[RMDB]
RNA sequence: GGGAACGACUCGAGUAGAGUCGAAAAGAGGAUCGAAAAGCCGGAAAGAUCCGAAAGGUGCGCGUUUGUCGAUCGCACCAAGUACAUGGGUUGUACGAAGCAGAUCGAAAACGGCGAAAAAGAAAAAGGGAUAUCAAAUGUUCGCAUUUGAUAUCCCAAAAGAAACAACAACAACAAC
Reactivity to 2A3 in 0.01 (KOAc 150mM, MgCl2 10mM, bicine 150mM(pH8.5), 24C), signal-to-noise 2, nucleotides 027 to 126: g010a000g030g050a020u020c050g060a040a010a110a020g060c010c010g000g010a190a020a000g000a000u010c000c000g070a110a090a000g130g010u080g020c080g000c040g000u060u200u090g300u070c070g000a120u110c000g000c030a020c020c030a040a000g000u010a000c000a020u090g210g290g000u040u020g000u000a000c040g030a040a050g000c050a060g000a020u000c000g000a010a000a000a190c020g010g000c040g010a000a040a000a100a000g270a070a030a060a000a000
Reactivity to DMS in 0.01 (KOAc 150mM, MgCl2 10mM, bicine 150mM(pH8.5), 24C), signal-to-noise 2, nucleotides 027 to 126: g060a170g000g000a070u000c060g010a150a070a100a130g000c020c030g000g060a140a190a300g000a020u060c010c000g000a060a120a120g000g070u040g030c000g000c000g000u010u000u000g000u000c020g000a040u010c010g010c010a110c060c040a010a070g000u000a000c000a000u000g030g020g000u020u000g010u000a010c010g010a160a130g010c090a170g040a000u020c000g000a040a030a090a100c000g020g030c000g000a000a080a000a090a050g010a030a070a050a050a070